[RMDB]
RNA sequence: GGGAACGACUCGAGUAGAGUCGAAAAACAAGCAUUGAUUGGUCCUGCCACCAAAUUAUUAGGCAAAUUCAUAGAAGAUAAAGAUACUAAAAAUAAACUGGCACAUGACUUAGCUACUAUGGCAGAGAAGCACGCACAAGAACUUGCCAAAGGUCAGAGAACAAUAGAGGUUCGCCUCUAUUGUUCUAAAAGAAACAACAACAACAAC
Reactivity to 2A3 in 0.01 (KOAc 150mM, MgCl2 10mM, bicine 150mM(pH8.5), 24C), signal-to-noise 3, nucleotides 027 to 156: a000c050a050a010g030c050a060u030u150g040a060u110u050g070g010u010c010c030u020g020c010c010a030c010c030a070a110a060u150u200a140u090u150a060g020g000c020a070a100a040u130u070c020a040u060a160g040a080a010g020a090u110a200a160a050g050a060u150a160c050u140a050a020a100a010a020u090a050a070a020c040u040g030g000c000a030c020a100u070g020a020c040u050u110a020g000c020u070a020c020u060a090u070g000g000c000a000g000a000g000a020a010g050c060a010c160g040c030a010c010a060a020g060a080a030c020u040u070g030c010c000a010a080a040g030g000u050c080a100g010
Reactivity to DMS in 0.01 (KOAc 150mM, MgCl2 10mM, bicine 150mM(pH8.5), 24C), signal-to-noise 1, nucleotides 027 to 156: a070c050a110a130g000c030a140u000u000g000a080u020u000g020g020u000c050c040u030g000c000c020a090c000c070a050a110a120u000u010a140u020u000a140g000g000c020a030a120a090u000u000c030a020u000a140g010a130a080g020a160u000a020a060a110g010a240u000a200c050u010a020a110a040a060a050u010a020a050a030c080u010g020g040c050a070c050a090u020g000a020c040u000u000a050g000c010u000a050c070u010a050u020g030g040c040a040g000a130g020a060a060g010c120a040c100g030c010a080c020a030a050g030a090a080c030u010u000g000c060c020a060a090a130g050g000u000c040a080g000

Chemical mapping of a 207-nucleotide RNA with 2A3 and DMS. Reactivities are given for positions 27 through 156. For 2A3 the reverse transcriptase was SuperScript II with manganese. DMS adducts were read by reverse transcription with MarathonRT.